[RMDB]
The record gives the reactivity of an RNA of 207 nucleotides to 2A3. Reactivities are given for positions 27 through 156. The 2A3 profile rests on 473 reads. Values are in units of 0.01, from 0 to 300, in steps of 10. 2A3 adducts were read by reverse transcription with SuperScript II with manganese. As a SHAPE reagent, 2A3 marks flexible, mostly unpaired nucleotides at the ribose 2'-OH.
RNA sequence: GGGAACGACUCGAGUAGAGUCGAAAACCUCACUACAUUUUACUGUUCCUAAAGAAUUUGCGACAGGUACAGUAAAACGUAUUGCAAGGUUUAUCAGUUCCUAUAAACAGGUAAAUAACAAUAUAUGAAAAGCAAAGACUGUUCGCAGUCUUUGCAAUCAACGAUAUCGCUUCGGCGAUAUCGUUGAAAAAGAAACAACAACAACAAC
Reactivity to 2A3 in 0.01 (KOAc 150mM, MgCl2 10mM, bicine 150mM(pH8.5), 24C), signal-to-noise 1, nucleotides 027 to 156: c020c000u000c010a000c010u000a010c000a010u060u000u000u000a000c000u000g000u030u030c000c020u050a050a170a090g100a230a210u170u260u300g170c050g050a050c120a130g010g000u020a000c000a000g000u040a000a000a000a000c000g000u000a000u010u020g060c070a030a040g030g000u030u000u020a050u050c000a010g050u020u000c090c020u030a120u140a200a090a040c050a000g050g080u100a060a140a040u140a060a070c040a120a000u070a010u040a020u220g100a050a100a020a020g000c000a000a010a000g000a000c010u000g000u110u020c130g010c050a000g000u000c000u000u000u000g000c000a000a010